[RMDB]
RNA sequence: GGGAACGACUCGAGUAGAGUCGAAAAACAACUGCUAUCUGCUGUCCCCAUCAUUUCAUACAGGAAAGAACAUUUUAACACCAAGGACAAUAUUUGAGAAUAAAGGACAGUUCUUCCCAAGAAAGGGCAGUUGGCAGCUUUACACUGACGUAGCAAAAAUAUCUCCUUACUUCGGUAAGGAGAUAUUAAAAGAAACAACAACAACAAC
Reactivity to DMS in 0.01 (KOAc 150mM, MgCl2 10mM, bicine 150mM(pH8.5), 24C), signal-to-noise 2, nucleotides 027 to 156: a140c030a050a010c050u010g000c010u020a030u000c060u000g020c000u010g000u000c040c000c020c020a130u030c020a140u000u000u010c050a140u000a170c090a130g070g000a070a040a110g040a070a070c020a160u000u000u000u000a030a100c120a070c030c030a170a160g020g030a160c070a060a080u000a110u000u000u030g010a150g020a150a090u000a100a100a130g010g000a040c030a060g000u000u000c010u000u000c020c000c000a070a100g010a130a100a070g010g040g010c010a030g000u000u000g000g000c020a020g040c000u000u010u020a100c040a100c060u000g000a020c100g000u000a120g010c090a030a030a090
Reactivity to 2A3 in 0.01 (KOAc 150mM, MgCl2 10mM, bicine 150mM(pH8.5), 24C), signal-to-noise 2, nucleotides 027 to 156: a000c010a020a010c000u020g000c010u070a110u220c020u070g020c010u030g020u060c030c010c000c010a050u090c000a000u040u090u050c070a070u120a180c090a050g000g080a140a130a050g040a070a050c030a050u070u080u060u100a130a050c100a020c030c060a050a020g070g070a070c070a100a070u060a160u170u150u140g040a060g040a080a010u120a100a090a080g020g000a010c010a010g010u010u010c000u040u000c010c000c010a030a000g100a070a130a000g000g020g020c010a000g000u030u000g010g000c000a010g030c010u040u090u110a080c060a010c010u090g110a020c040g140u120a020g070c020a030a040a000